This 207-nucleotide RNA was probed chemically with 2A3 and DMS. Conditions: 150 mM KOAc, 10 mM MgCl2 and 150 mM bicine (pH 8.5), 24 C. For DMS, 1,840 sequencing reads were counted. For 2A3 the reverse transcriptase was SuperScript II with manganese.

[RMDB]
RNA sequence: GGGAACGACUCGAGUAGAGUCGAAAAUCCUAAGUCCUGCCCUGUACACGAGGGUGGUGACAUGCAGUUCGGAAACGAACUGCAACAGCACCACCUCCCCACCGUGUACGGGGCAGGAUAUGGAAAACGUUUUGAAUCGUUCGCGAUUCAAAACGAACUCUAGAACUUGGUUCGCCAAGUUCUAGAGAAAAGAAACAACAACAACAAC
Reactivity to 2A3 in 0.01 (KOAc 150mM, MgCl2 10mM, bicine 150mM(pH8.5), 24C), signal-to-noise 2, nucleotides 027 to 156: u030c010c000u020a130a010g040u010c000c000u000g000c000c010c000u000g010u010a000c000a000c000g010a040g010g000g000u010g000g000u000g010a210c010a010u010g000c000a000g010u000u000c010g030g080a050a140a120c010g000a010a000c000u000g000c000a000a000c010a010g010c010a000c000c000a000c000c000u050c050c010c010c000a050c010c000g000u000g000u000a000c000g000g000g000g000c000a000g000g000a000u010a000u000g000g010a020a060a010a030c020g000u000u000u000u000g000a000a010u010c020g040u070u090c300g020c020g130a000u000u000c000a000a000a000a000c000g000a020a000
Reactivity to DMS in 0.01 (KOAc 150mM, MgCl2 10mM, bicine 150mM(pH8.5), 24C), signal-to-noise 1, nucleotides 027 to 156: u000c010c000u000a100a230g030u000c000c000u000g030c000c000c000u030g030u030a010c030a000c000g010a300g030g020g050u000g000g020u000g030a050c060a300u000g020c000a030g040u000u000c020g020g020a220a150a270c030g020a010a020c000u000g010c020a020a030c030a200g020c080a060c030c000a020c000c000u000c260c180c090c070a300c160c010g030u000g000u000a000c000g000g000g070g000c030a000g000g030a000u000a040u000g000g000a050a100a040a200c000g000u000u000u000u010g000a020a000u000c000g000u000u020c300g030c000g050a010u000u000c000a010a000a010a000c020g010a000a050